[RMDB]
RNA sequence: GGGAACGACUCGAGUAGAGUCGAAAAACGAUUCCGUACGCGGACUCGAAGGGCCCCAGAAGACCAAGGGGCCCAAACCUACCACUCAUUAGAUGCAUGGAAAUCACUAGGUGAUACGUCACCUAGAACACGCUUUUAAGCUUCGGCUUAAAAGCAAGUAGCAUUGGAGGUUCGCCUCCAAUGCUACAAAAGAAACAACAACAACAAC
Reactivity to 2A3 in 0.01 (KOAc 150mM, MgCl2 10mM, bicine 150mM(pH8.5), 24C), signal-to-noise 1, nucleotides 027 to 156: a010c000g000a000u000u000c010c000g000u050a030c300g000c020g090g020a010c010u000c000g060a100a140g000g000g000c000c000c000c000a140g120a300a080g040a120c140c060a050a090g000g030g000g020c000c000c010a010a000a000c000c000u040a040c000c010a020c060u090c020a010u040u180a040g060a180u210g050c110a020u050g110g000a070a050a030u110c010a050c060u000a000g000g030u000g000a000u020a020c180g080u010c000a000c020c000u010a000g000a010a000c020a000c080g010c000u010u030u000u000a000a000g000c010u020u190c280g080g000c000u040u000a000a000a000a000g000c010a000a000